[RMDB]
RNA sequence: GGGAACGACUCGAGUAGAGUCGAAAAUUUCAAAUGGCACUAUGAGCUGCCAAUGAUGUAUCACCACCAUAUCUCAUUAUUCUCCAGUAAAUGUGAUAAUAAUGUCAUCUGUUAACAUAAAAAAAGUCAUUACCACUCCGUUCGCGGAGUGGUAAUGAAAAGAAACAACAACAACAAC
Reactivity to 2A3 in 0.01 (KOAc 150mM, MgCl2 10mM, bicine 150mM(pH8.5), 24C), signal-to-noise 3, nucleotides 027 to 126: u110u060u040c040a050a150a170u170g010g000c020a000c010u180a130u300g110a000g030c120u000g000c000c000a000a040u030g000a000u020g080u040a070u100c030a070c080c000a050c010c000a040u060a030u120c030u000c000a000u000u050a020u040u000c000u000c000c010a000g070u200a090a150a180u080g040u080g040a010u000a050a000u000a000a000u040g070u080c090a130u000c030u040g110u230u140a160a000c030a010u170a070a180a000a000a050a000a000g090u010
This 177-nucleotide RNA was probed chemically with 2A3. Conditions: 150 mM KOAc, 10 mM MgCl2 and 150 mM bicine (pH 8.5), 24 C. Reactivities are given for positions 27 through 126.